[RMDB]
RNA sequence: GGGAACGACUCGAGUAGAGUCGAAAACUAAUUGAAGCACCAUCACGAGCCAUUGCAACCAUAGCGUCUGCGGCAUCUUGUGCGCUUAUGGGUAAAACUGCACCCAUGUGGUUAGCGACAUCAGCUAAUCCCUUGGGAUUUUCGAAUCCCAAGGGAUAAAAGAAACAACAACAACAAC
Reactivity to DMS in 0.01 (KOAc 150mM, MgCl2 10mM, bicine 150mM(pH8.5), 24C), signal-to-noise 3, nucleotides 027 to 126: c030u000a060a070u000u000g010a100a100g030c030a050c060c040a030u000c060a040c070g010a080g010c030c020a070u000u010g010c060a070a080c070c020a070u000a070g010c060g010u000c030u000g000c080g000g020c100a080u010c070u010u000g010u000g010c010g010c040u010u000a020u010g010g010g000u010a060a050a050a060c150u010g010c100a090c030c020c020a060u010g030u000g010g000u000u010a050g000c020g000a030c090a060u000c110a070g000c060u010a080
Reactivity to 2A3 in 0.01 (KOAc 150mM, MgCl2 10mM, bicine 150mM(pH8.5), 24C), signal-to-noise 2, nucleotides 027 to 126: c020u060a070a150u080u180g080a100a010g000c000a010c000c020a050u070c020a010c050g020a000g040c050c020a070u050u110g030c010a030a040c010c010a040u040a050g030c030g030u060c050u050g050c000g070g020c010a080u020c040u120u090g050u060g050c010g000c020u090u120a030u030g010g040g000u040a100a040a030a060c100u110g000c060a020c030c010c000a030u050g050u050g040g010u030u030a010g000c000g040a040c030a100u070c040a010g010c000u070a070

Conditions: 150 mM KOAc, 10 mM MgCl2 and 150 mM bicine (pH 8.5), 24 C.
Structure probing data (DMS and 2A3) for a 177-nucleotide construct.
High DMS reactivity at an A or C suggests that its Watson-Crick edge is free.
For DMS the reverse transcriptase was MarathonRT.
Reactivities are given for positions 27 through 126.
It was measured as part of the RMDB library OK2TRN.
For 2A3, 2,575 sequencing reads were counted.